[RMDB]
RNA sequence: GGGAACGACUCGAGUAGAGUCGAAAAAAAAAAGAUAUGGACGCUAAGAGCUUGGAUUUAUAGGCAAAGUAUAUCGGAAACGAUAUACGGAGCCUAUUGUCAGCUUAUGCGUCCUAAGUCAAAAAAACAAAAGGUAUCUCUUCGGAGAUACCUUUUGAAAAGAAACAACAACAACAAC
Reactivity to DMS in 0.01 (KOAc 150mM, MgCl2 10mM, bicine 150mM(pH8.5), 24C), signal-to-noise 1, nucleotides 027 to 126: a000a060a060a200a090a070g000a060u000a300u010g000g030a000c000g030c000u000a050a160g000a050g010c000u000u010g010g010a000u000u010u000a000u030a000g030g030c030a020a300a240g000u000a000u000a000u010c000g010g000a150a060a150c000g020a000u000a000u000a040c010g000g000a300g000c000c000u000a000u000u000g010u010c000a030g000c010u000u000a260u000g000c010g000u000c000c000u000a000a030g030u010c010a000a000a000a020a030a090a170